Annotation: An RNA of 207 nucleotides, treated with 2A3 and read out base by base.
[RMDB]
RNA sequence: GGGAACGACUCGAGUAGAGUCGAAAAUCUCAUGAUGGGUGUGAGGGUGAUGAUGAAGAUAAUAAUACAUUUAUUCCUCCGUUCUUCCUCUUGGGAAUUCACGGCACUCAGUUAUCUCAACGAGAGUGGAGGCGGUACAAGGGAUUUAGGGAUACAACUCGUCGCGCGUGUUCGCACGCGCGACGAGAAAAGAAACAACAACAACAAC
Reactivity to 2A3 in 0.01 (KOAc 150mM, MgCl2 10mM, bicine 150mM(pH8.5), 24C), signal-to-noise 1, nucleotides 027 to 156: u000c000u010c050a050u160g010a010u000g030g000g090u090g030u070g030a020g010g070g060u070g040a040u040g000a060u020g040a030a080g130a060u160a060a140u200a040a030u090a110c040a070u020u110u110a070u130u040c000c000u090c000c000g050u190u060c000u030u000c010c000u030c040u010u010g080g070g000a020a000u140u200c160a010c040g040g060c010a030c020u140c030a060g020u030u090a140u000c000u000c060a050a120c170g000a020g010a010g000u120g000g030a020g000g000c040g000g010u060a090c040a050a050g040g030g000a000u020u040u130a060g000g000g010a020u030a100c020a090a050

Source information:
The RNA was probed in 150 mM KOAc, 10 mM MgCl2 and 150 mM bicine (pH 8.5) at 24 C.